Structure probing data (2A3 and DMS) for a 177-nucleotide construct. The data come from the RNA Mapping Database (RMDB), library OK1LIB.
[RMDB]
RNA sequence: GGGAACGACUCGAGUAGAGUCGAAAAAUGACCAGCUUAUCUAUAAUCAUCAAUGAGUUAGUGGUCUGGUGCUCUUAUAUGCUACAUAAGUCGAACGCUGCAAGGACCAUAGAAGAGGCUACUGAGACACCUAAGGUGCAUUCGUGCACCUUAGGUGAAAAGAAACAACAACAACAAC
Reactivity to 2A3 in 0.01 (KOAc 150mM, MgCl2 10mM, bicine 150mM(pH8.5), 24C), signal-to-noise 4, nucleotides 027 to 126: a000u150g020a000c010c010a010g030c030u070u100a010u100c070u060a160u050a300a110u250c070a060u050c060a100a210u100g050a060g130u020u160a040g050u070g070g080u040c030u030g100g050u060g010c000u010c010u020u050a070u010a000u170g030c010u060a100c030a130u110a090a000g000u090c110g100a110a050c080g030c130u090g000c000a030a060g040g030a020c030c000a020u070a070g060a100a020g030a040g030g000c010u020a050c050u070g030a010g000a070
Reactivity to DMS in 0.01 (KOAc 150mM, MgCl2 10mM, bicine 150mM(pH8.5), 24C), signal-to-noise 3, nucleotides 027 to 126: a050u030g010a090c020c000a060g000c070u020u010a020u050c040u000a060u020a100a110u000c190a040u020c180a100a050u010g000a070g000u000u000a070g050u010g020g000u030c040u000g000g030u000g010c070u010c000u000u000a040u000a060u020g000c090u010a070c120a100u040a040a090g000u010c060g000a120a160c100g000c030u000g020c080a050a140g000g000a010c160c000a020u000a040g020a060a060g000a050g020g000c000u010a030c040u020g000a120g040a250
For DMS the reverse transcriptase was MarathonRT.
The reactions ran in a buffer of 150 mM KOAc, 10 mM MgCl2 and 150 mM bicine (pH 8.5), at 24 C.